[RMDB]
RNA sequence: GGGAACGACUCGAGUAGAGUCGAAAAGAUAUGGACUUGUCUUUCUUGGAUUUAUGAGAGAACAGUGGUUUGUAUCGGAAACGAUACAAACCACUGACUCAUUGUCAGAAAGUCAAGUCCUAAGUCACCAUACUACUAAGUUCGCUUAGUAGUAUGGAAAAGAAACAACAACAACAAC
Reactivity to 2A3 in 0.01 (KOAc 150mM, MgCl2 10mM, bicine 150mM(pH8.5), 24C), signal-to-noise 8, nucleotides 027 to 126: g020a020u080a060u240g000g000a000c000u010u010g000u000c010u030u040u040c020u120u300g300g010a110u300u300u190a020u110g010a040g010a020g060a300a080c000a010g000u010g010g000u010u000u010g010u000a000u010c010g030g010a070a080a040c020g010a000u000a000c000a000a000a000c000c000a000c000u000g000a000c000u000c000a000u000u010g020u020c010a010g010a010a010a010g000u010c000a000a010g000u000c000c000u000a000a000g010u000c010a020
Reactivity to DMS in 0.01 (KOAc 150mM, MgCl2 10mM, bicine 150mM(pH8.5), 24C), signal-to-noise 6, nucleotides 027 to 126: g010a040u000a300u000g000g000a010c000u000u000g010u000c000u000u000u010c000u000u010g020g010a030u000u000u000a010u000g010a010g000a150g000a120a140c010a010g030u000g010g000u000u000u000g010u000a000u000c000g010g000a150a080a260c010g020a010u000a000c000a010a000a010c000c000a000c000u000g000a040c010u000c000a010u000u000g000u000c000a020g000a010a010a010g010u000c000a010a000g000u000c010c000u010a010a080g010u000c040a300
An RNA of 177 nucleotides, treated with 2A3 and DMS and read out base by base. The 2A3 profile rests on 33,857 reads. The DMS profile rests on 13,561 reads. The reactions ran in a buffer of 150 mM KOAc, 10 mM MgCl2 and 150 mM bicine (pH 8.5), at 24 C. The data come from the RNA Mapping Database (RMDB), library TTRINS.